This 207-nucleotide RNA was probed chemically with 2A3 and DMS. The 2A3 profile rests on 2,646 reads. It was measured as part of the RMDB library RNAMAK.
[RMDB]
RNA sequence: GGGAACGACUCGAGUAGAGUCGAAAAGCUACUAUUCGUAGUAGCAUCGUACCUUUGUGUUUCGCCGUGUAAGACAGCCUAUGGGUCCCAUUGGGACCCUAAGGGCAAUGACGCACGAGCGAAACACUCUGGUUUAAUGGCUAGCUUCGGCUAGCAAAACCUUAUACACCUUCGGGUGUAUAAGGUUAAAAGAAACAACAACAACAAC
Reactivity to 2A3 in 0.01 (KOAc 150mM, MgCl2 10mM, bicine 150mM(pH8.5), 24C), signal-to-noise 4, nucleotides 027 to 156: g000c010u020a000c000u000a010u120u090c230g080u090a000g000u000a000g010c010a040u110c050g100u050a000c000c000u000u020u000g000u010g010u010u010u010c000g000c000c000g000u000g020u020a160a050g040a110c020a180g300c000c000u060a080u060g010g010g000u040c030c000c070a130u160u300g000g000g010a030c020c000c020u010a040a080g000g000g010c020a020a060u030g010a010c020g020c000a000c000g010a050g000c010g010a000a000a000c000a000c010u000c000u000g000g040u010u090u150a120a060u180g090g000c000u000a020g000c010u060u040c300g110g000c000u000a000g000c010a000a030
Reactivity to DMS in 0.01 (KOAc 150mM, MgCl2 10mM, bicine 150mM(pH8.5), 24C), signal-to-noise 2, nucleotides 027 to 156: g040c000u000a010c000u000a030u000u010c280g010u000a010g040u000a010g020c010a070u000c100g010u000a060c000c000u000u000u000g010u010g040u000u000u000c020g020c020c010g030u010g000u000a060a240g040a220c050a090g010c000c000u010a300u000g000g010g030u010c000c000c010a300u010u000g020g060g040a030c000c000c000u000a000a040g010g000g010c040a060a080u000g010a160c160g010c010a000c010g010a170g020c020g010a010a010a000c000a000c000u000c010u000g010g030u000u000u010a120a180u000g000g010c010u000a000g010c000u020u000c300g020g010c000u000a000g040c030a000a020
The reactions ran in a buffer of 150 mM KOAc, 10 mM MgCl2 and 150 mM bicine (pH 8.5), at 24 C. DMS adducts were read by reverse transcription with MarathonRT.